[RMDB]
RNA sequence: GGGAACGACUCGAGUAGAGUCGAAAACACUGAAGACUUCGAGCGUUUGAAGGAAGGAGGGGGUUUGCACGUAAGCCUGGCCCCGCCGGGCUCGGCUUUCUCGCUGAGAAAGCGGCGCAGGCAGCCAGACGUUAAGUUUUUUCGAAAACUUAACGUCAAAAGAAACAACAACAACAAC
Reactivity to 2A3 in 0.01 (KOAc 150mM, MgCl2 10mM, bicine 150mM(pH8.5), 24C), signal-to-noise 2, nucleotides 027 to 126: c060a010c040u070g030a100a000g050a060c030u040u040c070g050a060g030c030g070u020u070u200g060a070a020g070g010a040a050g030g030a040g030g030g020g010g020u030u060u070g010c050a030c060g030u040a050a000g010c000c000u010g020g000c000c060c010c010g000c030c010g010g080g000c010u000c020g030g000c030u030u040u000c040u000c020g190c130u140g000a020g030a060a050a000g050c000g020g020c010g000c000a010g010g030c010a000g050c010c000a050
Reactivity to DMS in 0.01 (KOAc 150mM, MgCl2 10mM, bicine 150mM(pH8.5), 24C), signal-to-noise 4, nucleotides 027 to 126: c130a100c130u010g000a090a110g000a120c060u000u000c030g010a040g010c080g020u000u000u010g000a120a050g000g020a080a080g010g010a090g010g010g010g010g010u000u000u010g000c060a100c060g010u000a080a070g030c030c010u000g010g020c030c040c100c150g000c080c070g010g000g010c000u000c170g010g000c000u000u000u000c040u000c030g020c180u030g000a050g000a020a070a020g010c000g000g010c090g020c050a080g010g000c030a100g010c040c090a130

An RNA of 177 nucleotides, treated with 2A3 and DMS and read out base by base. For 2A3 the reverse transcriptase was SuperScript II with manganese. For DMS the reverse transcriptase was MarathonRT.